[RMDB]
RNA sequence: GGGAACGACUCGAGUAGAGUCGAAAAGAAAGAAAGAAAGAUAAAUAGUAGUUAUUUCUUUAUAGCGUUCCUUAAAGAAUAUCUAUUCAUUCCCACUUUGCUUCUGAUUCCCACAGAUCAAAAGCAAUUAUACACCAAAGUUCGCUUUGGUGUAUAAAAAAGAAACAACAACAACAAC
Reactivity to 2A3 in 0.01 (KOAc 150mM, MgCl2 10mM, bicine 150mM(pH8.5), 24C), signal-to-noise 4, nucleotides 027 to 126: g050a000a050a000g040a030a050a000g040a080a110a000g030a040u200a100a180a050u150a080g030u000a000g010u020u050a090u090u200u030c000u040u020u010a130u140a140g180c010g020u020u010c000c000u000u010a010a010a000g000a010a010u010a010u000c000u010a010u030u070c050a060u020u030c040c010c000a030c030u030u030u030g050c010u010u010c010u010g040a110u050u050c020c030c020a070c020a010g100a020u060c060a090a030a020a010g030c000a000a030
Reactivity to DMS in 0.01 (KOAc 150mM, MgCl2 10mM, bicine 150mM(pH8.5), 24C), signal-to-noise 4, nucleotides 027 to 126: g000a070a060a110g010a120a050a060g010a110a040a160g010a130u020a080a080a110u030a080g010u010a030g000u010u010a020u010u000u010c000u010u000u000a010u040a190g000c020g000u010u000c000c000u000u010a010a020a010g000a030a000u000a010u000c000u010a010u010u000c080a120u010u000c010c010c020a170c080u010u010u000g000c020u000u000c010u000g010a160u000u000c030c020c080a150c170a080g000a040u010c090a030a030a040a050g010c110a060a060